[RMDB]
RNA sequence: GGGAACGACUCGAGUAGAGUCGAAAAUAAUAAUUGCAUUAUUUCUUAACAAAAAGACAUCCUAGCUUUACCAUGUUGUGAAACAAUCCAUUAAUUGUAAUAUUACGUUGAGCGCCUUGUUCAUCAACUAAUAACAGUGAUUCGUCACUGUUAUUAGAAAAGAAACAACAACAACAAC
Reactivity to DMS in 0.01 (KOAc 150mM, MgCl2 10mM, bicine 150mM(pH8.5), 24C), signal-to-noise 7, nucleotides 027 to 126: u010a040a050u010a070a110u020u020g010c080a180u010u010a030u010u000u000c040u010u020a070a100c130a050a070a060a050a060g010a070c110a060u000c020c020u000a070g000c040u000u000u010a060c070c070a090u000g010u000u000g010u010g000a080a050a040c080a040a040u010c080c050a040u010u000a040a040u020u010g000u010a050a080u020a060u000u000a040c100g000u000u010g000a030g010c080g010c060c060u000u000g000u000u000c080a070u010c090a070a160
Reactivity to 2A3 in 0.01 (KOAc 150mM, MgCl2 10mM, bicine 150mM(pH8.5), 24C), signal-to-noise 7, nucleotides 027 to 126: u070a010a010u070a030a090u140u140g040c010a030u060u040a040u030u090u020c020u070u120a160a130c070a050a120a040a010a000g040a030c020a040u060c020c010u020a030g020c030u060u030u050a060c020c030a100u080g030u050u010g040u040g060a030a060a030c020a020a030u020c030c030a070u060u120a070a090u090u100g040u070a060a090u070a080u230u110a050c100g040u030u060g030a020g020c010g040c000c040u080u090g020u030u020c020a030u020c010a020a060